[RMDB]
RNA sequence: GGGAACGACUCGAGUAGAGUCGAAAAUAUCCUUCCCGUUCCUGUGCAGAUGUCUGAGGCUUCUUUCUCCUUUAGUCAAAUCUGAUUUCUAUUUCUUCUUGGUUAAUACCCCCAGAGUGCUCCUGGCGUAUAUAUCUCGGUUCGCCGAGAUAUAUACAAAAGAAACAACAACAACAAC
Reactivity to DMS in 0.01 (KOAc 150mM, MgCl2 10mM, bicine 150mM(pH8.5), 24C), signal-to-noise 3, nucleotides 027 to 126: u010a150u010c050c040u010u000c010c010c000g020u000u000c010c000u010g030u010g020c080a050g010a100u000g010u000c040u010g010a190g000g010c100u000u010c040u010u000u000c050u000c020c030u000u000u010a080g000u000c090a040a100a070u010c050u010g000a100u000u010u010c050u000a090u000u000u010c020u000u000c030u000u000g000g000u000u000a060a110u000a220c080c020c010c010c040a080g010a090g020u000g000c050u000c040c020u000g000g010c230
Reactivity to 2A3 in 0.01 (KOAc 150mM, MgCl2 10mM, bicine 150mM(pH8.5), 24C), signal-to-noise 1, nucleotides 027 to 126: u140a010u070c020c000u000u040c010c010c000g000u020u000c000c000u060g030u020g060c020a020g010a090u070g050u000c000u020g050a040g010g000c010u070u010c000u070u070u000c050u050c010c000u100u080u180a040g020u060c020a040a020a190u000c020u010g030a050u020u110u000c000u050a080u030u080u000c030u060u000c010u020u010g020g030u020u000a100a020u130a230c010c010c020c000c000a030g010a020g040u040g000c010u000c040c010u000g000g020c040

About this RNA:
This 177-nucleotide RNA was probed chemically with DMS and 2A3. Conditions: 150 mM KOAc, 10 mM MgCl2 and 150 mM bicine (pH 8.5), 24 C. For DMS, 3,407 sequencing reads were counted. For DMS the reverse transcriptase was MarathonRT.